This 207-nucleotide RNA was probed chemically with DMS and 2A3. For 2A3, 1,643 sequencing reads were counted. For DMS, 1,840 sequencing reads were counted. DMS adducts were read by reverse transcription with MarathonRT. Conditions: 150 mM KOAc, 10 mM MgCl2 and 150 mM bicine (pH 8.5), 24 C.

RNA sequence: GGGAACGACUCGAGUAGAGUCGAAAAAUGGUAGUUAGUCUACUCGCUAUCCUAUUUACUUUGGAGUAAUCUAAAGUGUGUGUAAACGGGCGAAAGUCUGUAAAAUACUGGGGACAUAGGGUCAACAAGAACUAGUAGACCUUCGGGUCUACUAGAACCAUGAGACAUACUUCGGUAUGUCUCAUGGAAAAGAAACAACAACAACAAC
Reactivity to DMS in 0.01 (KOAc 150mM, MgCl2 10mM, bicine 150mM(pH8.5), 24C), signal-to-noise 1, nucleotides 027 to 156: a070u000g000g000u010a020g030u010u010a080g060u030c000u000a090c050u000c080g030c090u000a050u000c080c040u010a110u020u000u000a040c030u000u010u000g020g000a050g020u020a100a170u000c010u000a030a000a040g030u000g010u010g020u000g000u000a060a150a110c000g000g050g060c020g000a230a050a180g020u020c030u010g000u010a060a070a070a120u000a030c080u000g020g000g040g030a100c030a080u020a070g000g000g000u010c110a060a100c050a070a080g010a060a120c010u000a030g000u000a010g030a020c000c000u000u040c300g010g020g030u000c000u000a000c000u000a000g000a060a090
Reactivity to 2A3 in 0.01 (KOAc 150mM, MgCl2 10mM, bicine 150mM(pH8.5), 24C), signal-to-noise 2, nucleotides 027 to 156: a000u100g010g000u000a030g020u050u080a040g070u060c020u050a030c020u060c040g020c020u030a070u090c000c000u050a090u050u130u110a030c010u030u000u010g020g000a030g030u100a080a120u010c010u010a000a000a030g020u020g000u000g000u000g020u070a120a140a000c020g000g000g020c030g030a040a010a010g010u000c010u020g060u080a020a060a040a080u090a050c040u040g030g010g030g000a000c020a020u060a030g060g100g010u070c040a020a030c000a080a110g090a060a020c000u000a000g000u000a000g000a000c000c000u040u030c170g100g010g000u000c000u000a000c000u000a000g000a000a010